Chemical mapping of a 177-nucleotide RNA with 2A3 and DMS. Source: RMDB library OK1LIB, as collected in RNAgym.

RNA sequence: GGGAACGACUCGAGUAGAGUCGAAAAUAUGGUUUGGCGAUUGCCUCUUUAUCAGUUCAUCCUGAAUUACGUGGACAAAAAUUAGGUCGUGGCUUGGUUCAAGCAGUAGAAGAGCGUGCCAAAGCACAGCGCAUGCUGUAUUCGUACAGCAUGCGCUAAAAGAAACAACAACAACAAC
Reactivity to 2A3 in 0.01 (KOAc 150mM, MgCl2 10mM, bicine 150mM(pH8.5), 24C), signal-to-noise 4, nucleotides 027 to 126: u260a100u130g100g050u060u050u020g060g000c140g070a150u040u270g010c040c040u000c020u020u090u030a210u120c000a010g030u070u240c060a050u120c040c030u040g030a100a080u120u030a100c050g050u120g160g000a010c110a030a090a050a060a050u200u210a140g120g040u060c100g040u090g070g000c010u070u080g020g070u150u140c010a050a040g000c000a000g040u040a040g020a110a000g020a000g010c070g000u060g000c020c000a000a010a000g050c020a030c030
Reactivity to DMS in 0.01 (KOAc 150mM, MgCl2 10mM, bicine 150mM(pH8.5), 24C), signal-to-noise 2, nucleotides 027 to 126: u000a070u000g040g010u000u000u000g000g030c010g000a090u070u000g040c130c000u000c010u070u000u000a110u020c060a040g020u040u040c180a070u010c300c030u000g010a020a060u000u040a050c120g000u020g020g000a040c160a020a090a020a040a060u060u010a070g020g000u010c040g000u010g000g010c000u010u000g000g000u000u020c020a050a060g000c080a140g010u000a190g020a000a060g020a060g000c000g010u020g000c080c060a010a020a000g020c110a040c300
Conditions: 150 mM KOAc, 10 mM MgCl2 and 150 mM bicine (pH 8.5), 24 C.